Conditions: 150 mM KOAc, 10 mM MgCl2 and 150 mM bicine (pH 8.5), 24 C. An RNA of 177 nucleotides, treated with 2A3 and DMS and read out base by base.

[RMDB]
RNA sequence: GGGAACGACUCGAGUAGAGUCGAAAAAUGUAGAAGUAACCGAUAAAGCCUGUUGCAUAAAACACGCUUUUACGUGCUUCUUUGGCAUCACUUACAGUAAAGAAGCGCAUCAGAAUAUGUGGCAAGCACAAUACGCAACAUUCGUGUUGCGUAUUGUAAAAGAAACAACAACAACAAC
Reactivity to 2A3 in 0.01 (KOAc 150mM, MgCl2 10mM, bicine 150mM(pH8.5), 24C), signal-to-noise 6, nucleotides 027 to 126: a010u120g020u080a020g010a050a010g020u050a090a080c020c030g020a130u110a090a070a000g020c010c050u020g020u030u030g050c140a140u190a150a220a020a020c030a010c020g020c000u020u040u020u080a040c030g000u000g000c010u000u020c000u020u020u080g080g000c030a050u060c030a070c050u110u180a060c060a070g050u130a020a070a070g030a060a020g000c020g000c030a020u070c050a030g160a220a060u100a030u150g030u030g060g020c040a030a010g070c050
Reactivity to DMS in 0.01 (KOAc 150mM, MgCl2 10mM, bicine 150mM(pH8.5), 24C), signal-to-noise 5, nucleotides 027 to 126: a050u000g000u000a050g010a040a050g020u000a040a120c080c050g010a140u000a050a060a050g020c010c060u000g020u000u000g010c130a090u010a050a070a040a030c060a030c260g000c010u000u000u010u010a180c300g010u000g010c000u000u000c010u000u000u000g010g000c060a060u000c130a060c120u000u000a070c130a090g010u010a040a050a070g010a030a060g010c030g010c040a050u000c090a080g000a080a080u010a010u010g000u000g010g000c050a060a040g020c120